[RMDB]
RNA sequence: GGGAACGACUCGAGUAGAGUCGAAAAUACAAUUAGGAUUUUCAACUGGUGUGAACUUUGUUGUUCAGCCAGUUGGUGUUGUAGACACUGAGUGGGGUAACAUGUUAACGGGCAUUGCUGCACGUCCAAGGGUCGCAGUUCGCUGCGACCAAAAGAAACAACAACAACAAC
Reactivity to 2A3 in 0.01 (KOAc 150mM, MgCl2 10mM, bicine 150mM(pH8.5), 24C), signal-to-noise 1, nucleotides 027 to 129: u070a080c000a000a150u100u110a050g030g010a100u000u000u000u120c000a000a000c000u060g000g000u150g110u000g150a000a000c040u000u110u300g130u230u070g000u080u100c010a000g000c000c000a000g020u000u000g000g000u030g000u000u110g000u010a000g000a040c000a030c000u020g010a000g180u000g000g010g000g000u000a040a180c000a070u090g000u190u040a100a030c000g000g000g000c030a020u000u080g000c000u010g000c000a080c030g000u040c000c000a070a160g080
Reactivity to DMS in 0.01 (KOAc 150mM, MgCl2 10mM, bicine 150mM(pH8.5), 24C), signal-to-noise 3, nucleotides 027 to 129: u000a070c090a120a100u000u070a080g000g050a220u040u100u080u070c020a040a020c020u020g020g090u010g030u000g000a060a150c030u010u000u080g040u060u000g020u030u000c000a300g040c000c140a040g030u000u000g010g010u020g100u030u000g040u080a080g000a040c140a130c050u000g030a020g030u000g010g020g040g010u060a000a000c170a000u050g040u000u000a100a120c070g000g040g010c000a040u060u060g000c100u000g020c090a060c020g000u030c080c080a030a110g020